An RNA of 177 nucleotides, treated with 2A3 and DMS and read out base by base. The reactions ran in a buffer of 150 mM KOAc, 10 mM MgCl2 and 150 mM bicine (pH 8.5), at 24 C. The 2A3 profile rests on 1,601 reads. For 2A3 the reverse transcriptase was SuperScript II with manganese. It was measured as part of the RMDB library OK2TST.

RNA sequence: GGGAACGACUCGAGUAGAGUCGAAAAUCUAGACGUGCCCAAUUGGGCAAAGGUUGGGCCAUAGGCGCUGCGGUUCAUCAUCUUGCCCUCGCCAGGACCGCUCCCGUUCUACUACUUGGCGUCGCGGCUCUGGGUUAGUUUUCGAACUAACCCAGAGAAAAGAAACAACAACAACAAC
Reactivity to 2A3 in 0.01 (KOAc 150mM, MgCl2 10mM, bicine 150mM(pH8.5), 24C), signal-to-noise 2, nucleotides 027 to 126: u020c000u000a040g060a180c070g090u090g030c000c000c040a130a300u140u220g050g000g100c000a100a060a010g100g000u060u050g020g000g010c000c020a060u070a080g070g000c000g040c070u050g020c020g060g000u010u060c020a080u010c000a050u040c110u050u110g020c000c030c010u000c010g000c000c000a010g000g020a020c010c010g000c010u030c000c020c010g040u080u000c030u050a120c010u020a040c020u020u050g020g000c030g030u010c040g010c090g070g040
Reactivity to DMS in 0.01 (KOAc 150mM, MgCl2 10mM, bicine 150mM(pH8.5), 24C), signal-to-noise 3, nucleotides 027 to 126: u010c040u010a080g010a110c180g020u000g010c010c020c010a300a150u020u010g020g000g030c080a020a050a040g000g030u000u000g000g020g010c000c040a090u000a100g010g010c040g010c130u010g010c040g020g000u000u000c040a080u010c100a070u000c050u010u000g000c000c000c010u010c030g010c030c050a060g010g000a070c040c040g010c040u000c030c010c000g010u000u000c080u000a110c080u010a080c090u020u000g000g010c050g010u010c070g020c080g010g010